RNA sequence: GGGAACGACUCGAGUAGAGUCGAAAAAAAGUGUACGAAAGAACAAAGUAGCAAUCAAACCGAGUAGUGAAAUGAUGGCUUCAGUCCAAAAUGGGCAAACACUACAGACGGAGCCAAAGGCAAUUAAGACUCACCUUAUAUUCGUAUAAGGUGAGUCAAAAGAAACAACAACAACAAC
Reactivity to DMS in 0.01 (KOAc 150mM, MgCl2 10mM, bicine 150mM(pH8.5), 24C), signal-to-noise 3, nucleotides 027 to 126: a040a060a100g040u000g020u000a110c090g020a100a040a050g000a060a070c050a050a050a090g010u010a060g020c050a070a040u000c090a080a050a090c150c040g000a080g000u000a040g010u000g020a060a100a060u010g000a130u000g000g000c020u000u010c080a090g020u010c000c060a030a030a060a100u000g010g000g010c080a080a030a080c030a020c010u000a030c230a090g000a050c060g010g000a040g010c030c020a000a040a120g010g000c090a040a040u010u020a050a130
Reactivity to 2A3 in 0.01 (KOAc 150mM, MgCl2 10mM, bicine 150mM(pH8.5), 24C), signal-to-noise 3, nucleotides 027 to 126: a010a020a000g060u060g010u050a010c050g040a120a040a090g030a070a010c010a050a090a000g030u050a020g050c030a040a060u090c050a060a030a070c020c040g020a010g030u060a010g010u020g070a050a080a100u120g050a040u040g030g000c000u070u070c050a060g020u010c010c000a070a080a060a170u090g010g000g020c020a020a080a000c040a020c040u060a040c020a010g040a030c020g030g000a010g010c020c030a040a050a010g030g000c030a030a040u110u070a180a010